[RMDB]
RNA sequence: GGGAACGACUCGAGUAGAGUCGAAAAAAUACCGCCUCAGUUCCAAGCUCUUUCGUGGCACUGUAAACAGUCCUAUUGAGUUAGGGGCAGUCAACCACGUUGCGAAGCUAAAUUAUCUGGUCGAGAGUUACGAUUCCCUACUUCGGUAGGGAAUCAAACGUAUAAGGGCUUUCGAGCCCUUAUACGUAAAAGAAACAACAACAACAAC
Reactivity to 2A3 in 0.01 (KOAc 150mM, MgCl2 10mM, bicine 150mM(pH8.5), 24C), signal-to-noise 1, nucleotides 027 to 156: a000a000u150a060c000c020g050c000c000u050c000a020g050u100u000c000c000a000a000g010c010u000c010u000u060u010c030g010u010g000g020c150a010c060u010g030u110a160a230a120c030a090g020u000c020c020u020a050u000u130g070a120g300u010u080a000g010g000g050g000c000a000g020u020c000a020a010c010c000a020c030g000u030u000g030c060g140a100a000g030c000u080a060a000a100u140u070a060u060c060u000g000g090u070c070g050a010g000a000g120u040u140a060c080g000a010u000u010c000c000c000u000a000c000u000u000c100g090g000u000a010g000g000g010a010a000u000c010a000a010
Reactivity to DMS in 0.01 (KOAc 150mM, MgCl2 10mM, bicine 150mM(pH8.5), 24C), signal-to-noise 1, nucleotides 027 to 156: a110a100u000a090c030c030g050c000c010u000c060a110g000u010u010c010c010a140a300g010c020u000c000u000u000u010c010g000u000g020g010c060a020c010u020g010u010a050a080a110c020a260g010u000c010c000u000a040u000u010g030a300g000u000u000a050g040g020g020g020c010a040g010u000c000a080a000c000c000a030c050g050u000u000g070c140g010a060a110g040c060u000a010a000a030u010u010a100u010c110u000g020g030u000c050g010a110g010a140g020u000u000a070c060g000a020u000u000c000c010c000u020a010c000u000u000c270g060g000u000a000g000g000g000a000a000u000c010a010a060
Chemical mapping of a 207-nucleotide RNA with 2A3 and DMS. Values cover nucleotides 27 to 156. The reactions ran in a buffer of 150 mM KOAc, 10 mM MgCl2 and 150 mM bicine (pH 8.5), at 24 C.